[RMDB]
This 177-nucleotide RNA was probed chemically with 2A3.
It was measured as part of the RMDB library OK1LIB.
Reactivities are given for positions 27 through 126.
For 2A3 the reverse transcriptase was SuperScript II with manganese.
The 2A3 profile rests on 673 reads.
RNA sequence: GGGAACGACUCGAGUAGAGUCGAAAAAGAAAAGCAGUCUUGCACAAUGGCACAACAUGCACUCCAUUUCUGCUUUGAUUACGAAAGUUCUUGUAAGGUAUGGGGAGCUACGAAAACUUUGCCUAUCGGCGAUACUCCUGUUCGCAGGAGUAUCGCCAAAAGAAACAACAACAACAAC
Reactivity to 2A3 in 0.01 (KOAc 150mM, MgCl2 10mM, bicine 150mM(pH8.5), 24C), signal-to-noise 2, nucleotides 027 to 126: a000g120a000a060a000a000g040c030a000g000u080c010u090u180g010c140a000c100a280a140u200g030g000c060a070c130a160a080c000a100u150g030c000a000c030u020c000c000a000u020u010u010c020u000g100c000u110u120u090g150a150u170u160a000c030g120a120a010a000g080u110u000c000u010u070g020u110a030a050g110g040u170a040u030g000g000g000g000a020g000c010u090a050c160g050a000a000a140a000c030u130u070u070g030c040c000u010a130u010c090